[RMDB]
The record gives the reactivity of an RNA of 177 nucleotides to 2A3 and DMS.
The reactions ran in a buffer of 150 mM KOAc, 10 mM MgCl2 and 150 mM bicine (pH 8.5), at 24 C.
Values cover nucleotides 27 to 126.

RNA sequence: GGGAACGACUCGAGUAGAGUCGAAAAGCCUAGUAAAAGAAAUAAAUGAACGCUGAACAUUCAGUAAGCGGAAUUGAAUGGCCGUAGUUCUAGGCGAAACGGCGAAGAUAUGUAAUCAUAUCGAAAAGGGAAUAGUAAUCUUCGGAUUACUAUUCCCAAAAGAAACAACAACAACAAC
Reactivity to 2A3 in 0.01 (KOAc 150mM, MgCl2 10mM, bicine 150mM(pH8.5), 24C), signal-to-noise 4, nucleotides 027 to 126: g000c000c000u090a120g250u300a060a070a140a060g270a070a050a020u180a030a160a050u080g040a060a010c000g000c000u000g000a000a010c050a270u150u270c030a080g010u000a010a010g000c040g030g000a000a040u080u110g080a030a070u110g160g000c030c000g010u000a040g030u180u130c000u010a010g000g000c030g010a060a170a000c000g000g000c030g000a090a000g000a000u020a000u010g020u090a190a040u240c020a000u010a000u000c000g030a040a040a020a120
Reactivity to DMS in 0.01 (KOAc 150mM, MgCl2 10mM, bicine 150mM(pH8.5), 24C), signal-to-noise 4, nucleotides 027 to 126: g000c000c000u000a000g000u020a040a040a040a040g020a080a040a070u040a080a050a030u010g000a300a190c000g010c000u010g000a210a120c200a120u040u020c280a060g020u000a120a020g000c010g000g010a020a080u020u010g000a060a180u020g000g020c000c000g030u000a020g000u040u020c010u000a000g010g010c010g000a090a070a080c000g000g000c000g020a090a050g000a010u030a000u000g010u010a080a160u060c000a000u000a000u000c000g000a040a060a120a100